[RMDB]
RNA sequence: GGGAACGACUCGAGUAGAGUCGAAAAAAAGAUAUGGAUUCCACUACCCACCGGUGUGUAACGCUAAGACAGUCCAUCGGAAACGAUGGAUCGAGCGUUACCACCGAGGUGGAAUCCUAAGUCAAAAGUUCUUUAAAUAGUUCGCUAUUUAAAGAACAAAAGAAACAACAACAACAAC
Reactivity to 2A3 in 0.01 (KOAc 150mM, MgCl2 10mM, bicine 150mM(pH8.5), 24C), signal-to-noise 3, nucleotides 027 to 126: a000a010a000g190a070u250a140u240g010g000a000u000u000c010c000a010c010u190a270c030c030c050a010c040c000g000g000u010g020u030g010u030a000a000c010g010c010u080a140a030g080a090c040a040g040u000c000c000a000u000c010g040g000a060a070a030c010g010a000u000g000g010a000u040c010g020a000g000c000g000u000u000a000c000c000a000c000c000g000a000g000g000u030g000g000a000a000u000c000c000u000a010a010g070u020c070a020a000a150a140
Reactivity to DMS in 0.01 (KOAc 150mM, MgCl2 10mM, bicine 150mM(pH8.5), 24C), signal-to-noise 5, nucleotides 027 to 126: a090a090a150g000a070u010a250u010g000g000a020u000u000c000c010a010c010u000a120c030c010c040a300c100c000g000g000u000g000u020g010u000a010a010c000g010c020u000a160a140g010a130c300a140g000u000c010c000a000u000c010g000g000a110a050a110c010g000a010u010g010g000a020u000c050g000a020g020c010g020u010u000a000c000c000a000c010c000g000a010g010g000u000g000g000a010a010u010c000c000u010a010a100g010u010c070a050a120a110a220
The record gives the reactivity of an RNA of 177 nucleotides to 2A3 and DMS. It was measured as part of the RMDB library TTRDES. The 2A3 profile rests on 10,532 reads.